This 177-nucleotide RNA was probed chemically with 2A3 and DMS.
For 2A3, 34,227 sequencing reads were counted.
2A3 adducts were read by reverse transcription with SuperScript II with manganese.

[RMDB]
RNA sequence: GGGAACGACUCGAGUAGAGUCGAAAAACCGUGCUGCUGACCCGCGGCAAACAUUCGAAGAUGUCGCAGGAAGAUCAGGUGCGGCAGGCCAUCCAGAGCUUGGACAUCGCCAUCCAGACCGGCGACCAUACAAAUAUCGUUUCGACGAUAUUUGUAUAAAAGAAACAACAACAACAAC
Reactivity to 2A3 in 0.01 (KOAc 150mM, MgCl2 10mM, bicine 150mM(pH8.5), 24C), signal-to-noise 9, nucleotides 027 to 126: a010c000c000g000u030g010c010u030g000c000u030g080a130c000c000c010g000c000g010g000c000a020a190a030c060a120u240u270c130g110a100a030g060a130u050g010u010c010g000c050a100g020g020a110a080g040a150u060c030a020g000g050u030g010c010g020g020c020a040g050g000c010c010a070u050c030c020a060g020a030g100c040u090u080g010g000a020c010a100u050c030g000c020c000a030u040c030c020a040g070a100c030c040g010g000c010g010a010c010c010
Reactivity to DMS in 0.01 (KOAc 150mM, MgCl2 10mM, bicine 150mM(pH8.5), 24C), signal-to-noise 9, nucleotides 027 to 126: a140c010c010g030u020g010c020u010g010c040u000g000a160c040c020c050g010c010g020g030c010a030a080a110c140a150u040u040c190g020a150a120g010a110u000g010u010c010g010c000a050g010g000a300a080g000a140u020c070a090g010g020u010g010c030g000g000c040a050g010g010c020c030a100u020c060c070a060g000a100g010c050u010u000g000g010a070c090a110u010c040g010c020c030a110u020c030c050a070g000a090c090c070g000g000c020g010a060c210c090